[RMDB]
RNA sequence: GGGAACGACUCGAGUAGAGUCGAAAACAGUGUUGGGUUGAUGACUAAUACACGACAUGGAGGAAUGAUUCCAGUUCCAGCUCUAAAUCAUAGAAUUGUUUUGAUAGUUGAUACACUCAUUUUCGUUCAUUUACACGGUAUAAAUGUUCCAAUAUUCCUACGAAACAUCGUUCGCGAUGUUUCGUAGAAAAGAAACAACAACAACAAC
Reactivity to 2A3 in 0.01 (KOAc 150mM, MgCl2 10mM, bicine 150mM(pH8.5), 24C), signal-to-noise 3, nucleotides 027 to 156: c060a030g090u020g020u040u030g030g010g000u040u080g090a140u070g010a040c030u080a060a040u080a070c040a010c160g040a020c010a020u100g020g020a030g020g060a100a060u080g020a100u160u020c010c000a010g020u020u030c040c010a030g000c060u000c010u060a060a130a060u080c060a080u070a150g080a150a130u120u080g060u020u110u000u080g020a030u050a050g070u030u030g050a060u060a080c050a030c030u050c030a070u010u030u090u090c040g020u030u020c020a040u010u000u030a030c120a030c090g070g000u080a030u060a140a140a020u100g010u060u000c030c000a000a020u100a120u100u080c010
Reactivity to DMS in 0.01 (KOAc 150mM, MgCl2 10mM, bicine 150mM(pH8.5), 24C), signal-to-noise 2, nucleotides 027 to 156: c080a170g030u000g020u000u000g000g020g020u000u010g000a120u000g010a100c060u010a120a130u000a070c060a080c000g020a070c040a070u000g010g030a180g010g010a050a090u010g010a130u000u000c050c050a160g010u000u020c030c010a140g020c040u000c110u010a060a040a100u000c040a150u000a110g000a080a090u000u000g000u000u000u000u000g020a100u000a040g000u010u000g000a140u010a090c020a050c060u010c040a110u020u000u000u010c010g010u000u010c050a060u000u010u000a030c090a140c050g040g000u000a060u010a000a030a080u030g000u000u000c020c050a040a150u000a240u000u000c020